[RMDB]
This 177-nucleotide RNA was probed chemically with DMS. For DMS, 1,128 sequencing reads were counted.
RNA sequence: GGGAACGACUCGAGUAGAGUCGAAAAUGGUGACUUUCGACCGUAUGUCGGAAGAAGAACUGCUGGCUGGCAUUGAAGGCCUUGUCGCGCCGGAAAAGAACGACGGCUUCUGAUCGUUCUAUCAGAAGCGCUAAUCGUGAUUCGUCACGAUUAGCGCAAAAGAAACAACAACAACAAC
Reactivity to DMS in 0.01 (KOAc 150mM, MgCl2 10mM, bicine 150mM(pH8.5), 24C), signal-to-noise 2, nucleotides 027 to 126: u000g040g010u000g020a220c040u000u000u000c030g010a020c000c300g020u000a100u010g010u000c010g000g000a030a000g000a070a070g030a110a070c050u000g010c060u000g020g050c000u000g000g000c050a080u010u000g000a130a070g000g000c010c000u000u040g010u000c030g050c060g030c050c000g020g000a030a080a090a060g000a060a060c000g020a080c070g000g000c040u000u000c060u000g020a070u000c050g020u000u000c140u010a060u000c070a050g010a080a090